[RMDB]
RNA sequence: GGGAACGACUCGAGUAGAGUCGAAAACCUGGACGUUCGGCAAUCUUCACCAAUACUGAGGAUUACUGGUGUGCGGCGUAUCCCCCAAGCGCCCCGCCAGGCAAGGUACCGUGGACCGCGUACCUUGACAAGGACAGCAAUUCGUUGCUGUCCUUGUAAAAGAAACAACAACAACAAC
Reactivity to 2A3 in 0.01 (KOAc 150mM, MgCl2 10mM, bicine 150mM(pH8.5), 24C), signal-to-noise 7, nucleotides 027 to 126: c000c000u010g020g050a050c080g050u070u050c030g030g050c050a040a080u010c020u030u020c020a040c060c030a110a130u120a210c080u110g030a040g050g020a070u040u050a080c010u010g000g020u040g060u140g040c110g020g000c010g000u140a300u270c010c000c000c000c010a050a020g020c000g000c000c000c000c000g020c000c000a000g010g020c010a000a010g000g010u010a010c010c050g040u120g070g070a080c070c030g010c050g020u010a000c000c000u000u020g000
Reactivity to DMS in 0.01 (KOAc 150mM, MgCl2 10mM, bicine 150mM(pH8.5), 24C), signal-to-noise 8, nucleotides 027 to 126: c020c000u000g010g020a110c110g000u010u000c040g000g020c080a060a030u000c010u000u010c020a040c060c090a080a120u030a120c300u010g000a060g000g000a060u000u010a080c000u000g010g010u000g010u030g020c130g020g000c000g020u000a120u020c030c000c000c010c010a120a230g000c010g000c010c000c010c020g000c000c010a010g000g000c020a000a000g000g010u000a010c040c030g010u030g010g010a300c110c030g010c170g010u010a010c000c000u000u000g000